[RMDB]
RNA sequence: GGGAACGACUCGAGUAGAGUCGAAAAACGGGAGUUCCACCUGCGUUUCGGACAUCCACACGAGGACCGGCCCCGGUUCCUCGAGGGGAAACGGGCCGCGGCCCGCGCCAAGUGGAUGCAGGAGGAGACCCUACUAGAACUUCGGUUCUAGUAGGGUAAAAGAAACAACAACAACAAC
Reactivity to 2A3 in 0.01 (KOAc 150mM, MgCl2 10mM, bicine 150mM(pH8.5), 24C), signal-to-noise 1, nucleotides 027 to 126: a000c040g020g030g020a070g080u060u000c030c030a050c020c000u050g020c010g010u030u100u150c050g080g050a020c000a010u000c000c010a010c010a020c020g000a070g010g040a040c010c000g030g040c030c040c010c000g040g000u010u000c020c010u010c040g060a180g000g040g000g020a060a030a010c000g010g030g020c030c020g150c080g090g000c020c010c010g050c030g000c020c090a220a030g010u000g020g000a000u020g050c010a020g000g040a020g000g040a030g040
Reactivity to DMS in 0.01 (KOAc 150mM, MgCl2 10mM, bicine 150mM(pH8.5), 24C), signal-to-noise 2, nucleotides 027 to 126: a100c060g020g000g000a240g030u010u000c000c010a120c010c010u000g020c070g000u000u010u020c040g020g000a300c040a010u000c020c000a010c010a190c000g000a040g000g000a050c010c010g010g010c300c020c030c000g000g010u010u000c000c000u000c020g020a050g020g010g000g010a000a010a030c010g000g000g020c050c040g040c140g070g000c020c000c000g010c030g020c160c190a040a140g000u010g000g000a010u000g000c000a040g000g000a130g010g010a080g000